[RMDB]
RNA sequence: GGGAACGACUCGAGUAGAGUCGAAAAUGCCUUUCUAAUCUAUGUUAUGAUGUGAACACUAUUGGGAAGCACGGGGUAAUUCUCUAAUAACCCAAAUGCCAGAGGACGGCUCACACUCAUCCUGGAUACUGAAGGAAUGGGCCCAGAGAUUGCCAGAGCAUUAGUCAGGUUUCGACCUGACUAAUGCAAAAGAAACAACAACAACAAC
Reactivity to 2A3 in 0.01 (KOAc 150mM, MgCl2 10mM, bicine 150mM(pH8.5), 24C), signal-to-noise 1, nucleotides 027 to 156: u030g030c030c020u020u070u070c070u090a050a100u030c060u020a100u100g130u150u050a120u120g120a070u060g060u040g040a060a020c020a010c140u070a110u090u030g000g000g000a060a030g000c070a040c080g050g000g020g000u020a060a150u210u080c030u000c000u060a070a220u050a090a130c000c000c000a000a130a030u070g000c040c020a050g010a070g180g070a010c050g010g010c010u060c000a020c000a010c040u040c040a060u000c000c010u040g000g010a040u090a250c040u100g010a110a000g010g000a000a050u100g030g020g000c030c000c000a010g010a030g000a220u000u090g000c010c050a040g120a030
Source: RMDB library OK3TST, as collected in RNAgym. The record gives the reactivity of an RNA of 207 nucleotides to 2A3. The 2A3 profile rests on 424 reads. For 2A3 the reverse transcriptase was SuperScript II with manganese. The reactions ran in a buffer of 150 mM KOAc, 10 mM MgCl2 and 150 mM bicine (pH 8.5), at 24 C. Reactivities are rounded to 0.1 and cut off at 0 and 3.